[RMDB]
Background
Conditions: 150 mM KOAc, 10 mM MgCl2 and 150 mM bicine (pH 8.5), 24 C. This 177-nucleotide RNA was probed chemically with DMS and 2A3. For DMS the reverse transcriptase was MarathonRT. For 2A3 the reverse transcriptase was SuperScript II with manganese. Values are in units of 0.01, from 0 to 300, in steps of 10. It was measured as part of the RMDB library OK2TRN. The DMS profile rests on 2,030 reads. For 2A3, 1,676 sequencing reads were counted.
RNA sequence: GGGAACGACUCGAGUAGAGUCGAAAAUGACCGGGUGGCCCGUGCUGAUGGCUUUGAGCAACAAGGACGUUGUCGGGGAGACUCUGGGCGUGGAUUUGACCGAACGGCUUGAGGGAACGCUGGCAGCGACCCAUGUGCAAUUCGUUGCACAUGGGUCAAAAGAAACAACAACAACAAC
Reactivity to DMS in 0.01 (KOAc 150mM, MgCl2 10mM, bicine 150mM(pH8.5), 24C), signal-to-noise 2, nucleotides 027 to 126: u000g000a130c040c010g000g010g010u010g020g000c050c020c050g000u000g030c070u000g020a060u000g000g000c060u000u030u000g010a130g000c130a060a070c090a080a080g000g000a070c080g000u000u000g020u000c040g010g000g000g010a140g010a080c060u000c050u010g020g020g020c080g030u010g000g000a150u010u000u010g020a190c050c040g030a050a090c060g010g010c050u000u000g000a100g000g000g020a120a150c070g020c030u000g010g040c080a070g010c100
Reactivity to 2A3 in 0.01 (KOAc 150mM, MgCl2 10mM, bicine 150mM(pH8.5), 24C), signal-to-noise 2, nucleotides 027 to 126: u050g040a020c010c020g050g000g000u040g010g090c060c040c010g070u080g000c020u040g000a100u030g070g000c000u060u030u080g080a080g020c010a000a090c020a090a090g090g000a020c010g060u050u020g040u070c040g000g000g010g030a050g020a020c040u000c030u100g060g000g000c040g060u040g050g070a090u120u070u170g110a100c000c030g030a060a060c020g060g010c040u040u050g000a080g000g010g020a060a000c040g000c050u020g030g000c000a030g020c010